[RMDB]
RNA sequence: GGGAACGACUCGAGUAGAGUCGAAAAUAACGAACUAGCCAUGGUGAGGGCCAUUGAGGAUGCAGUCCUGGAUUUGGAGGCAAUAGAAAACAAUCACAUGACCACCCUUCUCAAGGAUAAAGACAGCCGAGAUAUAUAGGUUCGCCUAUAUAUCUCGAAAAGAAACAACAACAACAAC
Reactivity to DMS in 0.01 (KOAc 150mM, MgCl2 10mM, bicine 150mM(pH8.5), 24C), signal-to-noise 9, nucleotides 027 to 126: u010a090a120c090g010a080a090c070u010a090g010c040c040a070u010g010g010u000g010a090g010g000g010c040c060a070u010u000g010a070g010g010a080u000g020c080a080g010u000c030c030u000g010g000a090u010u010u000g010g010a090g010g010c060a060a070u010a090g000a070a070a060a080c140a050a060u000c050a050c080a060u000g000a070c050c040a080c060c030c040u000u000c030u000c060a060a070g010g000a080u000a040a060a080g000a060c120a070g010c140
Reactivity to 2A3 in 0.01 (KOAc 150mM, MgCl2 10mM, bicine 150mM(pH8.5), 24C), signal-to-noise 6, nucleotides 027 to 126: u090a020a040c040g020a020a020c030u020a060g020c020c010a050u060g060g000u060g030a070g000g040g000c000c010a050u050u090g040a030g050g000a030u070g040c020a010g060u020c000c010u040g050g030a120u080u040u090g050g010a020g020g020c020a040a050u070a130g100a040a090a010a020c050a000a050u060c030a020c000a110u060g010a010c000c000a020c020c010c000u050u000c020u010c020a020a050g070g000a040u100a120a120a010g070a040c030a010g040c040

The record gives the reactivity of an RNA of 177 nucleotides to DMS and 2A3. DMS adducts were read by reverse transcription with MarathonRT. Source: RMDB library OK2TST, as collected in RNAgym. Values are in units of 0.01, from 0 to 300, in steps of 10.